[RMDB]
Source: RMDB library OK1LIB, as collected in RNAgym. An RNA of 177 nucleotides, treated with DMS and 2A3 and read out base by base. The RNA was probed in 150 mM KOAc, 10 mM MgCl2 and 150 mM bicine (pH 8.5) at 24 C. The DMS profile rests on 3,191 reads. DMS adducts were read by reverse transcription with MarathonRT.

RNA sequence: GGGAACGACUCGAGUAGAGUCGAAAAGGUGAUGGUCCACGACGGAUUCCAGAAGGUCGAUUCCUCGUAAAACGGCACGCCGGCAGGAAUUUUCAAGGCCGCUCGGCGCUCGGAGGUGAAUGCAUGCUCAUCUCACCGAUUUCGAUCGGUGAGAUGAAAAAGAAACAACAACAACAAC
Reactivity to DMS in 0.01 (KOAc 150mM, MgCl2 10mM, bicine 150mM(pH8.5), 24C), signal-to-noise 2, nucleotides 027 to 126: g000g010u020g000a120u000g040g020u000c050c040a080c110g000a100c090g000g020a040u010u010c040c020a120g020a120a150g020g010u000c060g000a050u010u000c000c000u000c000g000u040a080a000a090a170c080g000g000c100a120c080g000c020c040g000g000c010a100g010g030a080a030u020u020u000u000c200a140a180g020g000c000c030g020c100u020c080g010g000c030g000c090u000c090g000g030a080g020g000u000g000a110a080u000g000c040a050u020g010c140
Reactivity to 2A3 in 0.01 (KOAc 150mM, MgCl2 10mM, bicine 150mM(pH8.5), 24C), signal-to-noise 3, nucleotides 027 to 126: g040g000u040g050a090u130g020g050u040c010c000a030c030g060a000c070g030g000a060u100u040c020c030a060g040a190a030g110g000u050c030g030a100u050u090c000c010u040c020g010u010a080a070a080a010c010g070g000c030a020c060g030c000c000g000g000c050a110g060g070a090a100u090u140u090u180c080a060a060g100g000c020c000g000c020u130c030g000g030c020g010c020u020c040g020g020a020g010g030u060g010a060a000u060g060c060a030u120g000c010